[RMDB]
RNA sequence: GGGAACGACUCGAGUAGAGUCGAAAAAAAAAGAUAUGGACGAUGGAUGAGACGCGGACAGCCGAGUUUCGUCGGAAACGACGAAAUAUCUGUCCGAACUACGUUCGCCAUCGUCCUAAGUCAAAAACAAAGAAACAGUGUUCGCACUGUUUCUUUGAAAAGAAACAACAACAACAAC
Reactivity to 2A3 in 0.01 (KOAc 150mM, MgCl2 10mM, bicine 150mM(pH8.5), 24C), signal-to-noise 2, nucleotides 027 to 126: a000a020a000a000a020g050a000u060a000u060g000g000a000c010g000a000u010g010g080a130u070g030a170g020a280c040g020c000g040g000a010c010a060g160c180c090g030a050g000u020u000u000c010g000u020c010g010g010a010a040a000c000g010a000c020g030a000a010a000u160a160u000c030u030g010u040c000c010g000a010a000c020u160a050c020g020u020u010c010g000c010c000a000u020c000g020u010c000c000u000a010a000g000u020c010a020a020a000a070a030
Reactivity to DMS in 0.01 (KOAc 150mM, MgCl2 10mM, bicine 150mM(pH8.5), 24C), signal-to-noise 3, nucleotides 027 to 126: a040a060a070a090a070g000a030u000a160u010g000g000a010c010g010a020u000g000g010a040u010g040a190g000a000c010g020c000g000g020a020c000a110g050c300c160g020a090g000u000u000u000c000g000u000c000g000g010a030a030a040c000g000a010c000g010a000a000a000u000a060u010c010u000g010u000c000c000g010a040a030c110u010a300c030g010u000u000c030g000c010c000a020u000c000g000u000c000c000u000a000a030g000u030c030a070a090a060a100a120